[RMDB]
RNA sequence: GGGAACGACUCGAGUAGAGUCGAAAACAUACUGUUGAACAGAAAGAAGGAAGGUGGUGGAAGGAGGCAGAGAGUGAAUACUUCUCAUUUCAACUCUGGAUCCAUGUAAUACGAGUUGACUUCCUCGUCAGUCUGUUUAGUUCGCUAAACAGACUGAAAAAGAAACAACAACAACAAC
Reactivity to DMS in 0.01 (KOAc 150mM, MgCl2 10mM, bicine 150mM(pH8.5), 24C), signal-to-noise 5, nucleotides 027 to 126: c050a110u010a080c060u010g020u000u000g010a090a210c090a060g000a100a060a060g000a140a070g000g000a060a050g020g000u000g030g020u000g010g000a180a140g020g020a060g000g030c080a050g010a060g000a070g010u000g000a080a080u010a100c120u000u000c040u010c030a090u010u000u000c070a060a050c010u010c010u000g010g010a090u000c040c060a060u000g010u000a070a100u010a110c080g000a060g030u010u000g000a080c110u000u000c010c010u000c180g010
Reactivity to 2A3 in 0.01 (KOAc 150mM, MgCl2 10mM, bicine 150mM(pH8.5), 24C), signal-to-noise 3, nucleotides 027 to 126: c020a020u220a090c020u060g060u120u150g120a120a010c040a010g080a090a110a040g070a030a050g070g020a010a030g020g080u120g000g030u090g040g060a070a070g030g040a010g040g070c130a010g050a000g000a010g060u090g140a070a070u090a140c050u090u130c040u030c040a070u030u100u070c020a030a050c010u020c010u000g030g060a010u070c040c020a050u130g090u120a100a130u120a160c070g010a030g060u030u030g050a040c010u020u000c020c010u000c010g040